[RMDB]
RNA sequence: GGGAACGACUCGAGUAGAGUCGAAAAGAUAUGGACCGUAGGUAAGGGAGCGACUAUUCGGAAACGAAUACUCGCGAGGAUCUUACUACGGUCCUAAGUCAAAGCCAUCGGCUUCGGCCGAUGGCAACCUUACAUCAGAGUUCGCUCUGAUGUAAGGAAAAGAAACAACAACAACAAC
Reactivity to DMS in 0.01 (KOAc 150mM, MgCl2 10mM, bicine 150mM(pH8.5), 24C), signal-to-noise 3, nucleotides 027 to 126: g000a020u000a190u020g000g000a020c000c000g010u000a010g010g000u010a000a010g010g010g010a090g030c000g000a010c110u000a000u000u000c010g010g010a050a040a120c000g020a020a010u000a000c180u000c000g020c010g000a060g010g000a090u000c000u000u000a030c000u010a000c000g000g000u000c000c000u000a010a060g000u000c000a140a140a160g000c000c000a000u000c000g000g000c000u000u020c260g040g000c000c000g020a020u010g000g000c010a010a010
Reactivity to 2A3 in 0.01 (KOAc 150mM, MgCl2 10mM, bicine 150mM(pH8.5), 24C), signal-to-noise 3, nucleotides 027 to 126: g020a010u030a020u080g000g000a000c000c000g000u020a020g140g260u070a040a010g080g120g170a080g010c000g000a000c000u000a010u010u000c010g020g040a050a010a010c010g010a010a000u000a000c020u000c000g000c020g020a040g060g110a190u070c000u000u010a010c010u010a000c020g010g000u000c000c000u000a000a010g000u000c010a000a000a080g000c000c000a000u010c000g030g000c030u100u140c300g160g000c000c010g000a000u010g000g020c010a000a000

Source information
An RNA of 177 nucleotides, treated with DMS and 2A3 and read out base by base. Conditions: 150 mM KOAc, 10 mM MgCl2 and 150 mM bicine (pH 8.5), 24 C. 2A3 adducts were read by reverse transcription with SuperScript II with manganese. The data come from the RNA Mapping Database (RMDB), library TTRDES.